Structure probing data (2A3 and DMS) for a 207-nucleotide construct.
For 2A3 the reverse transcriptase was SuperScript II with manganese.
DMS adducts were read by reverse transcription with MarathonRT.
The 2A3 profile rests on 10,058 reads.
The RNA was probed in 150 mM KOAc, 10 mM MgCl2 and 150 mM bicine (pH 8.5) at 24 C.
RNA sequence: GGGAACGACUCGAGUAGAGUCGAAAAGGUGCGCGUUCGUCACCCGGUCGGCUGACCUCGGUAAGGGUUUCGACGAGGUGGACCUCGUGAUCUACGACGAGGCGUACAACCUGACCGACACCCAGACGGGUGCGCUCGAUCCGACGCAGACGGCGGCCUCAUUCUACAAUUUCGAUUGUAGAAUGAGAAAAGAAACAACAACAACAAC
Reactivity to 2A3 in 0.01 (KOAc 150mM, MgCl2 10mM, bicine 150mM(pH8.5), 24C), signal-to-noise 9, nucleotides 027 to 156: g100g000u070g020c090g000c010g050u090u160c000g000u010c010a040c000c020c010g010g010u020c010g020g130c110u170g080a110c020c010u060c060g020g060u120a140a120g040g010g000u020u040u060c070g020a060c070g030a010g020g020u070g040g070a210c000c000u000c000g000u030g070a210u070c070u200a060c090g100a000c000g000a020g000g000c030g070u130a070c030a030a050c010c000u020g050a060c030c010g010a020c020a020c060c010c000a010g030a040c010g010g020g020u070g050c030g000c020u060c020g030a070u020c010c020g020a030c030g010c040a030g030a140c030g060g020c010g000g000c010
Reactivity to DMS in 0.01 (KOAc 150mM, MgCl2 10mM, bicine 150mM(pH8.5), 24C), signal-to-noise 3, nucleotides 027 to 156: g000g040u000g020c010g020c070g060u010u010c030g020u000c000a180c020c010c010g030g010u000c020g020g000c100u010g010a060c030c010u010c040g020g030u000a190a300g010g010g010u000u000u010c020g010a060c040g020a030g020g040u010g010g000a120c010c010u000c010g010u000g020a140u000c100u000a180c110g030a070c000g010a060g010g010c030g030u000a130c030a040a040c020c020u010g010a070c010c020g010a080c050a070c010c000c010a250g000a130c050g010g020g000u000g010c000g030c020u000c030g000a100u000c020c000g000a050c010g000c010a130g000a100c020g000g000c030g010g000c120